The record gives the reactivity of an RNA of 177 nucleotides to 2A3 and DMS. The reactions ran in a buffer of 150 mM KOAc, 10 mM MgCl2 and 150 mM bicine (pH 8.5), at 24 C. For 2A3, 1,625 sequencing reads were counted. 2A3 adducts were read by reverse transcription with SuperScript II with manganese. For DMS the reverse transcriptase was MarathonRT.

[RMDB]
RNA sequence: GGGAACGACUCGAGUAGAGUCGAAAAGUUUCCGGGUUCGCCCGGAAACAAAGUGUGUGUCAAAAAGAGAGAGAGAAAAACACACACACAAACUCUCUCUCAAAAGAGAAGUCUUCGGACUUCUCAACUCUUAGGUUAUCUUCGGAUAACCUAAGAGAAAAGAAACAACAACAACAAC
Reactivity to 2A3 in 0.01 (KOAc 150mM, MgCl2 10mM, bicine 150mM(pH8.5), 24C), signal-to-noise 1, nucleotides 027 to 126: g000u000u000u000c000c000g030g000g000u040u040c100g060c030c040c010g000g010a020a000a000c000a010a020a010g010u010g000u000g020u010g030u060c100a060a020a010a290a050g020a000g000a000g000a000g010a000g020a110a130a010a080a020c030a010c000a000c000a000c000a000c020a060a260a210c010u000c000u010c010u000c020u000c000a030a070a040a000g000a000g000a000a020g000u000c000u020u230c300g060g000a030c000u000u010c000u000c000a000a000
Reactivity to DMS in 0.01 (KOAc 150mM, MgCl2 10mM, bicine 150mM(pH8.5), 24C), signal-to-noise 1, nucleotides 027 to 126: g000u000u000u000c000c000g030g000g110u000u020c240g030c030c000c010g000g000a010a000a000c000a090a020a120g010u000g000u000g000u000g000u000c110a090a040a000a080a080g010a020g000a020g000a050g010a030g010a080a060a090a150a050c040a020c010a000c010a020c030a070c180a090a130a140c070u010c000u000c000u000c000u000c030a110a030a050a160g000a000g000a040a000g000u000c010u000u000c220g000g000a000c000u000u000c010u000c000a030a050